[RMDB]
RNA sequence: GGGAACGACUCGAGUAGAGUCGAAAAAGUAUUAAUCUCUAUGACUAACAGAAGCAUAUAAGCAUUCUCCAUUGGAGCAAAGGCUUUCUUUGGCUACAGCUAGGGCAAGCCGGCAAGUCAUCACAAAACCAGUCAUUACUUUCGAGUAAUGACUGGUAAAAGAAACAACAACAACAAC
Reactivity to DMS in 0.01 (KOAc 150mM, MgCl2 10mM, bicine 150mM(pH8.5), 24C), signal-to-noise 5, nucleotides 027 to 126: a090g000u040a050u010u020a070a070u000c030u000c030u030a050u010g000a050c020u000a100a090c180a090g010a120a030g000c040a090u020a080u040a110a130g010c010a110u010u010c000u000c030c010a180u030u060g000g010a080g000c160a020a080a110g010g000c030u000u010u010c010u000u000u000g010g040c010u020a070c280a150g000c000u000a020g010g000g000c090a050a020g010c000c000g010g020c080a060a040g000u000c010a050u000c190a070c190a050a040a060
Reactivity to 2A3 in 0.01 (KOAc 150mM, MgCl2 10mM, bicine 150mM(pH8.5), 24C), signal-to-noise 7, nucleotides 027 to 126: a000g170u140a110u180u180a140a110u030c030u000c020u030a050u050g030a040c010u040a130a010c050a120g060a110a020g040c060a050u100a040u040a250a020g020c050a130u090u010c020u000c010c010a150u070u300g050g010a050g000c060a100a070a030g000g010c000u010u020u020c000u020u050u050g010g000c010u120a140c120a100g000c000u020a020g000g000g030c010a000a000g020c000c000g010g000c010a020a010g010u000c000a020u040c050a040c050a140a100a040
The record gives the reactivity of an RNA of 177 nucleotides to DMS and 2A3. For 2A3 the reverse transcriptase was SuperScript II with manganese. The RNA was probed in 150 mM KOAc, 10 mM MgCl2 and 150 mM bicine (pH 8.5) at 24 C. The data come from the RNA Mapping Database (RMDB), libraries RFM100 and RFMREP. 2A3 is a SHAPE reagent: it acylates the 2'-hydroxyl of flexible nucleotides of all four kinds.